[RMDB]
RNA sequence: GGGAACGACUCGAGUAGAGUCGAAAAACACUGCAAGUUGUGCGGGAGGCUUUAGCCUUGGUGAGUAAUCAGAAGCAAGUCGUGGUCAGGGUCAACCCUGAUCAGGCAGGAGCUAUUCGUGAACAAACUGAACGUACGUAUUCGUACGUACGUUCAGAAAAGAAACAACAACAACAAC
Reactivity to DMS in 0.01 (KOAc 150mM, MgCl2 10mM, bicine 150mM(pH8.5), 24C), signal-to-noise 5, nucleotides 027 to 126: a100c080a130c050u000g010c060a100a080g010u010u010g030u000g020c030g000g000g000a080g020g020c060u000u000u000a120g030c010c020u000u000g000g020u000g020a110g010u020a070a070u000c040a080g020a080a070g000c040a170a100g030u000c040g020u000g030g010u010c010a010g000g000g010u030c300a160a170c020c010c010u000g000a010u000c000a060g010g000c020a150g000g010a080g010c010u010a110u000u000c060g020u000g000a070a080c090a090a100a140
Reactivity to 2A3 in 0.01 (KOAc 150mM, MgCl2 10mM, bicine 150mM(pH8.5), 24C), signal-to-noise 2, nucleotides 027 to 126: a000c060a000c010u070g000c040a170a060g050u050u120g030u110g090c000g020g020g010a040g020g000c070u140u100u250a090g000c000c010u060u070g100g020u060g020a010g000u070a070a050u040c010a030g050a070a000g040c040a110a030g020u050c100g210u030g030g000u000c020a010g050g000g070u150c050a270a300c010c030c010u010g010a010u000c000a000g030g000c000a010g000g110a030g000c000u050a070u120u070c070g060u060g070a050a030c050a020a050a070